[RMDB]
RNA sequence: GGGAACGACUCGAGUAGAGUCGAAAAGCGACUAUUUUUACACUGCUGCCUGCGCGAGCCUGGGCGUUAAGUUUGCUGAUAACCGGAUACAAAAGCUCGCUGCGGUUCAUCAUAUAGCUGUACUUAACCAGAUCUCUAUCAUCGAAAAGAUUGGUAAGAUCGCAGCAUAAUUCGUUAUGCUGCGAUCAAAAGAAACAACAACAACAAC
Reactivity to 2A3 in 0.01 (KOAc 150mM, MgCl2 10mM, bicine 150mM(pH8.5), 24C), signal-to-noise 1, nucleotides 027 to 156: g050c020g070a040c050u060a250u020u200u030u090u120a090c180a030c080u150g020c020u060g000c000c000u030g020c040g010c010g030a000g010c000c090u190g030g040g000c010g000u000u020a010a010g000u010u050u100g010c030u010g000a010u000a010a000c010c000g000g030a060u100a300c060a030a090a050a000g010c000u000c010g000c030u100g020c000g000g000u060u020c030a010u000c040a000u140a010u210a110g000c040u060g050u120a010c010u000u000a000a020c010c030a040g000a260u010c000u000c010u100a090u100c010a030u030c080g080a110a100a090a130g030a060u070u120g000g000u050a070a000